[RMDB]
RNA sequence: GGGAACGACUCGAGUAGAGUCGAAAAAACGCACGAGGAGAGGGCAAUUCAUGGCAUCGACUUACACCGACGCGCACCGCAACGCGUGCGCCGCGGCGAUCGCGGCGCUCGGCAACCGGGUCGGGCUCUACACGUCGGCCGGCGCCCGCGUCGGCACCGCAAGUAACAGAUUCGUCUGUUACUUGCGAAAAGAAACAACAACAACAAC
Reactivity to 2A3 in 0.01 (KOAc 150mM, MgCl2 10mM, bicine 150mM(pH8.5), 24C), signal-to-noise 1, nucleotides 027 to 156: a000a000c060g020c070a050c040g030a060g050g000a080g000a020g060g030g020c000a040a080u100u120c060a110u190g020g060c050a050u050c070g090a050c030u030u110a050c090a050c120c020g000a000c030g070c010g060c070a030c110c020g010c130a090a010c030g000c000g000u010g000c030g000c000c000g040c010g000g070c070g180a170u300c040g000c000g050g070c010g000c010u000c020g040g000c000a000a080c070c020g070g050g050u030c060g010g010g040c000u020c010u020a040c030a010c090g140u090c030g050g090c060c000g010g010c070g010c090c000c060g030c020g000u000c000g000g060c010a010c020
An RNA of 207 nucleotides, treated with 2A3 and read out base by base. The reactions ran in a buffer of 150 mM KOAc, 10 mM MgCl2 and 150 mM bicine (pH 8.5), at 24 C. The 2A3 profile rests on 453 reads.